[RMDB]
RNA sequence: GGGAACGACUCGAGUAGAGUCGAAAAAGAUCCACGCUACGGCGUGGAUCACACGUUCAUCCCUAUUCGGACGGAAGUAGGCAUAGUGCCGAAGGAACGCAUUAGUCAUGCGCUACGGCGCAUGACACACAUCAGAGUCACUUCGGUGACUCUGAAAGAAAACGAUUUCGUUCGCGAAAUCGUUUUCAAAAGAAACAACAACAACAAC
Reactivity to 2A3 in 0.01 (KOAc 150mM, MgCl2 10mM, bicine 150mM(pH8.5), 24C), signal-to-noise 1, nucleotides 027 to 156: a010g000a000u000c000c000a030c010g000c000u080a040c240g120g080c000g000u020g000g010a000u000c000a000c000a000c000g020u030u030c010a060u050c010c000c000u030a130u010u070c060g060g000a030c000g070g060a050a070g030u130a010g220g030c020a110u100a140g100u110g180c030c010g010a010a010g040g010a020a020c010g000c130a040u000u260a080g020u010c000a000u000g000c010g050c030u030a010c300g040g000c000g000c000a010u000g010a000c020a000c000a010c000a070u030c030a000g010a000g000u000c000a010c000u020u150c220g110g010u000g050a000c020u010c000u010g000a000a000a000